[RMDB]
RNA sequence: GGGAACGACUCGAGUAGAGUCGAAAAGCCAGCUCGUUACGCAACAGCACACAUAUGACAGGCAAUUUGUGUUUAUUGCGUGGCCAUAAAGACCUGUCAUAUGGCCGAGAAAAACUACUACAGCUGGGCCUGAUCGGCGAUUCGUCGCCGAUCAGGCAAAAGAAACAACAACAACAAC
Reactivity to 2A3 in 0.01 (KOAc 150mM, MgCl2 10mM, bicine 150mM(pH8.5), 24C), signal-to-noise 1, nucleotides 027 to 126: g080c000c010a000g000c010u100c080g000u030u110a010c000g050c010a200a000c030a190g000c010a030c030a000c000a030u000a100u080g000a000c010a000g080g000c010a190a190u000u040u130g100u000g000u000u070u060a290u110u030g180c110g100u100g060g000c000c000a030u040a000a030a000g030a030c000c000u000g010u000c000a000u000a000u040g000g010c010c030g040a080g100a000a110a000a000a000c090u160a000c030u010a000c080a000g000c000u000g000g160